This 170-nucleotide RNA was probed chemically with 2A3 and DMS. Source: RMDB library 15KLIB, as collected in RNAgym. Values cover nucleotides 27 to 129. The RNA was probed in 150 mM KOAc, 10 mM MgCl2 and 150 mM bicine (pH 8.5) at 24 C. Values are in units of 0.01, from 0 to 300, in steps of 10. DMS (dimethyl sulfate) methylates the pairing face of unpaired adenines and cytosines.
[RMDB]
RNA sequence: GGGAACGACUCGAGUAGAGUCGAAAAGCUCUACCAGAAACUUCUGCCGAUAUUCUGGUGGUUGAUGAGGUUAGUAUGUGCACUAAUUAUGAUCUUUCAAUUAUUAAUGCACGUAUUAAAGCUAAGCACAGGACCGCGUUCGCGCGGUCCAAAAGAAACAACAACAACAAC
Reactivity to 2A3 in 0.01 (KOAc 150mM, MgCl2 10mM, bicine 150mM(pH8.5), 24C), signal-to-noise 1, nucleotides 027 to 129: g000c000u000c000u040a030c000c000a030g070a060a110a100c020u000u030c000u120g110c030c080g000a000u020a140u010u120c000u010g000g000u020g000g100u170u060g060a080u040g120a000g050g000u000u000a000g000u000a000u000g000u030g020c000a010c010u000a050a000u010u050a030u060g020a030u000c170u080u240u080c090a100a100u000u070a010u000u000a020a010u000g000c000a030c020g000u000a000u000u000a000a000a000g070c020u070a100a000g030c000a050c010a070
Reactivity to DMS in 0.01 (KOAc 150mM, MgCl2 10mM, bicine 150mM(pH8.5), 24C), signal-to-noise 2, nucleotides 027 to 129: g020c020u020c060u020a040c040c000a000g000a080a000a060c270u020u020c040u190g030c110c130g040a120u050a120u050u000c000u010g070g000u060g030g020u030u080g020a100u050g000a020g020g020u000u040a040g010u000a000u000g000u000g040c000a000c000u000a000a020u010u010a010u000g000a080u080c130u020u050u000c090a030a060u050u000a010u280u000a090a000u050g000c000a000c000g070u010a000u300u000a000a050a030g040c010u000a030a100g020c000a010c210a040